The record gives the reactivity of an RNA of 177 nucleotides to DMS and 2A3. The RNA was probed in 150 mM KOAc, 10 mM MgCl2 and 150 mM bicine (pH 8.5) at 24 C. For 2A3 the reverse transcriptase was SuperScript II with manganese. The 2A3 profile rests on 5,148 reads. Reactivities are given for positions 27 through 126. For DMS the reverse transcriptase was MarathonRT.
RNA sequence: GGGAACGACUCGAGUAGAGUCGAAAAGACACUCAGUUCGCUGAGUGUCAAAUAAAAUCAGCGGUUAAAAACGAGGCGUUAUAAGCGCUGAACGCCUCGUUAAAAGAACCAAGUUCGCUUGGUUCAACACUAGGACCUAGUUCGCUAGGUCCUAGUGAAAAGAAACAACAACAACAAC
Reactivity to DMS in 0.01 (KOAc 150mM, MgCl2 10mM, bicine 150mM(pH8.5), 24C), signal-to-noise 3, nucleotides 027 to 126: g010a000c000a010c010u000c010a000g020u000u020c200g030c010u000g010a000g030u000g000u010c010a000a040a040u000a050a060a050a100u010c050a070g000c080g000g010u000u010a030a050a070a040a010c010g000a010g010g000c000g010u000u000a110u010a100a090g000c070g010c070u000g010a020a010c010g010c000c000u000c000g010u000u000a010a050a080a110g010a000a010c010c000a010a010g010u000u010c250g010c000u000u010g000g000u000u000c000a110a130
Reactivity to 2A3 in 0.01 (KOAc 150mM, MgCl2 10mM, bicine 150mM(pH8.5), 24C), signal-to-noise 3, nucleotides 027 to 126: g010a000c000a000c000u000c000a020g020u050u040c090g040c170u000g000a000g000u000g000u000c000a010a000a000u010a010a010a000a050u060c020a000g090c030g130g050u150u180a120a120a030a000a000c000g000a000g000g000c010g000u000u050a100u020a200a080g060c070g000c100u040g020a000a010c010g000c000c000u000c000g000u000u010a000a000a000a020g000a000a000c010c000a000a000g010u010u070c220g000c090u000u000g000g030u000u000c000a000a020